The record gives the reactivity of an RNA of 177 nucleotides to 2A3. 2A3 adducts were read by reverse transcription with SuperScript II with manganese.
RNA sequence: GGGAACGACUCGAGUAGAGUCGAAAACGUACCCAUUAGACGGUCGGCAGACUUGUACUGAACUGAGUAAUUGUGUAGAUAACUUAACCGAUAAGACUGAUGAGCUAUACUCAUUGUGCCUGAUACUCGCGUGAACUCCGUUCGCGGAGUUCACGCGAAAAGAAACAACAACAACAAC
Reactivity to 2A3 in 0.01 (KOAc 150mM, MgCl2 10mM, bicine 150mM(pH8.5), 24C), signal-to-noise 1, nucleotides 027 to 126: c000g060u160a070c000c000c000a000u020u130a000g000a000c180g000g130u060c000g160g060c020a040g040a070c030u060u040g030u060a030c190u100g030a060a030c130u000g000a090g060u120a160a240u080u040g000u020g020u000a060g280a180u070a080a080c000u120u100a070a060c000c010g000a000u000a300a070g000a000c010u000g000a000u000g000a040g000c140u300a080u080a300c000u060c000a000u000u160g080u010g000c000c140u020g000a000u030a080c060u040